About this RNA: Conditions: 150 mM KOAc, 10 mM MgCl2 and 150 mM bicine (pH 8.5), 24 C. Chemical mapping of a 177-nucleotide RNA with 2A3 and DMS. The DMS profile rests on 28,654 reads. For 2A3, 34,367 sequencing reads were counted.
RNA sequence: GGGAACGACUCGAGUAGAGUCGAAAAAGGCAUACCGGACAUCCACAAGGUGUCCCUGCGCGAGUCCAAGCGCAUCGUGCCGAGCUCCGAUGCCCCAGACGGCUACACCAACGAUAGCGAGUGGGUGUCUAGAUGUCAUAUUCGUAUGACAUCUAGAAAAAGAAACAACAACAACAAC
Reactivity to 2A3 in 0.01 (KOAc 150mM, MgCl2 10mM, bicine 150mM(pH8.5), 24C), signal-to-noise 9, nucleotides 027 to 126: a000g040g000c040a030u060a090c050c060g000g000a000c000a000u020c020c020a100c040a190a050g010g000u000g000u010c000c000c000u030g000c000g000c010g010a020g080u030c070c090a060a030g000c000g000c010a050u090c100g010u010g000c000c010g020a050g040c020u000c030c010g050a070u130g000c010c000c000c010a020g030a090c040g060g000c010u030a020c040a040c070c120a220a080c110g150a250u040a020g030c020g020a020g040u200g000g020g000u030g030
Reactivity to DMS in 0.01 (KOAc 150mM, MgCl2 10mM, bicine 150mM(pH8.5), 24C), signal-to-noise 9, nucleotides 027 to 126: a100g010g020c010a020u010a130c280c150g000g010a030c010a010u000c010c040a160c300a160a300g000g010u000g000u000c000c000c100u000g020c020g000c010g000a100g020u010c080c110a110a130g000c020g010c000a030u000c110g010u000g000c000c000g000a120g010c080u000c020c030g010a080u010g000c010c000c010c030a220g000a060c040g010g000c020u010a040c040a200c100c120a070a080c180g000a120u000a030g000c030g000a100g010u000g010g000g010u000g010